Chemical mapping of a 207-nucleotide RNA with 2A3 and DMS. The reactions ran in a buffer of 150 mM KOAc, 10 mM MgCl2 and 150 mM bicine (pH 8.5), at 24 C.
[RMDB]
RNA sequence: GGGAACGACUCGAGUAGAGUCGAAAAGCAUCCGACAUGGUGCUGGGAUGCGAAUAUCAGCACGUUACUCCUCGAGAAGGCAUGGGAGGAGGAUCAUCCAUGCAAUGGCUUUUGCCUAUCGUACCAUAGAGUCGUCGGUACGUAAGAUGACGACGGAACGAUUAGCGAUGUUCGCAUCGCUAAUCGUAAAAGAAACAACAACAACAAC
Reactivity to 2A3 in 0.01 (KOAc 150mM, MgCl2 10mM, bicine 150mM(pH8.5), 24C), signal-to-noise 5, nucleotides 027 to 156: g020c010a020u040c040c040g110a160c100a080u120g070g000u040g000c030u030g030g000g000a070u060g020c050g050a030a020u120a070u130c060a020g020c020a000c040g010u050u110a040c030u010c010c000u020c010g030a040g040a060a020g080g020c010a020u020g030g030g000a040g040g030a040g010g040a040u090c010a000u010c020c010a010u020g000c010a020a120u100g030g000c020u070u090u110u300g000c000c000u040a080u070c040g000u020a000c000c000a060u080a090g100a010g030u010c020g000u000c010g020g000u110a070c040g040u030a080a020g030a100u100g020a000c010g000a000c000g000g030a040
Reactivity to DMS in 0.01 (KOAc 150mM, MgCl2 10mM, bicine 150mM(pH8.5), 24C), signal-to-noise 2, nucleotides 027 to 156: g000c000a190u000c010c000g000a140c060a270u000g010g000u010g050c020u000g000g050g000a110u020g000c120g030a080a070u000a090u010c020a050g000c030a080c060g050u010u000a180c020u010c030c010u030c030g000a200g030a130a180g020g010c010a060u020g000g050g000a050g010g030a000g000g010a060u010c060a050u000c050c030a070u000g020c080a110a090u000g010g030c010u010u000u010u010g020c020c020u000a130u000c040g000u040a100c020c000a130u000a190g010a170g010u000c020g050u000c030g000g020u000a040c100g010u010a090a140g010a150u010g010a030c050g020a040c060g010g000a080
Notes:
The DMS profile rests on 3,674 reads. It was measured as part of the RMDB library OK3TST. For DMS the reverse transcriptase was MarathonRT.